[RMDB]
RNA sequence: GGGAACGACUCGAGUAGAGUCGAAAAUCGUGUCAUUGCAGUAUAUAGCCCCAACGGGUGCUGUGAUGGGUAGGGGAGCGUCGUCUGCCGGGUGAAGCGGCACUGGAAGGUAGUCGUGGACGGUUGAUGAACUAAGUACCUUCGGGUACUUAGUUCAAAAAGAAACAACAACAACAAC
Reactivity to DMS in 0.01 (KOAc 150mM, MgCl2 10mM, bicine 150mM(pH8.5), 24C), signal-to-noise 4, nucleotides 027 to 126: u010c080g010u000g010u000c030a040u010u000g010c000a040g000u000a130u010a150u010a180g010c020c000c000c090a110a140c290g010g010g020u010g000c020u000g020u010g000a030u000g000g000g010u010a050g010g010g000g000a060g030c060g020u000c050g020u010c040u000g020c030c020g020g020g010u010g000a110a130g010c030g000g020c020a040c040u000g010g010a080a090g000g000u010a070g000u010c030g000u000g010g010a030c040g000g000u010u000g010a190
Reactivity to 2A3 in 0.01 (KOAc 150mM, MgCl2 10mM, bicine 150mM(pH8.5), 24C), signal-to-noise 1, nucleotides 027 to 126: u070c020g000u010g050u070c020a020u010u040g030c020a000g050u010a050u000a030u120a200g000c000c000c000c010a030a060c070g020g000g010u050g000c000u000g030u020g010a010u000g020g030g060u140a100g070g000g030g000a040g030c020g070u030c000g000u060c050u050g010c030c000g100g030g110u070g040a030a010g060c020g040g010c010a010c030u020g040g080a040a030g030g000u040a070g050u080c040g040u020g030g020a010c050g010g000u030u060g030a080

Structure probing data (DMS and 2A3) for a 177-nucleotide construct. Conditions: 150 mM KOAc, 10 mM MgCl2 and 150 mM bicine (pH 8.5), 24 C. It was measured as part of the RMDB library OK2TRN.